[RMDB]
RNA sequence: GGGAACGACUCGAGUAGAGUCGAAAAGAAUUUUAGAAAAGCAAGGCCGCACAAGCAGCACCCGAAAUGCUGAGGGCUAAUUUGGGGUUUAGGAGCAACCUUUCCUGGAAAAAGUGGAAAGGAAAGAAUAAUUACUAUGGUUCGCCAUAGUAAUUAUAAAAGAAACAACAACAACAAC
Reactivity to 2A3 in 0.01 (KOAc 150mM, MgCl2 10mM, bicine 150mM(pH8.5), 24C), signal-to-noise 3, nucleotides 027 to 126: g050a080a080u110u100u180u200a070g080a020a140a000a010g020c010a010a080g040g040c040c000g070c030a040c020a040a030g020c030a020g000c020a070c000c050c040g060a040a060a020u080g020c040u040g030a080g000g060g000c000u040a110a070u030u030u090g020g030g000g020u020u020u050a050g030g010a040g010c030a010a080c000c000u000u000u000c000c000u020g030g020a180a200a020a000a000g190u090g020g000a010a020a000g000g030a060a000a000g080a020
Reactivity to DMS in 0.01 (KOAc 150mM, MgCl2 10mM, bicine 150mM(pH8.5), 24C), signal-to-noise 5, nucleotides 027 to 126: g020a080a050u020u030u040u020a110g020a120a100a090a070g010c060a070a120g010g000c000c030g000c080a060c140a140a070g010c040a030g000c050a110c030c020c060g000a050a070a100u020g000c030u020g000a100g010g000g010c040u010a030a070u020u000u020g000g000g000g000u020u010u020a070g000g000a080g010c100a070a110c010c000u000u000u000c000c000u000g010g030a110a070a050a100a110g020u020g000g000a020a020a010g010g010a020a050a050g000a130
Description:
Chemical mapping of a 177-nucleotide RNA with 2A3 and DMS. Conditions: 150 mM KOAc, 10 mM MgCl2 and 150 mM bicine (pH 8.5), 24 C. For 2A3 the reverse transcriptase was SuperScript II with manganese.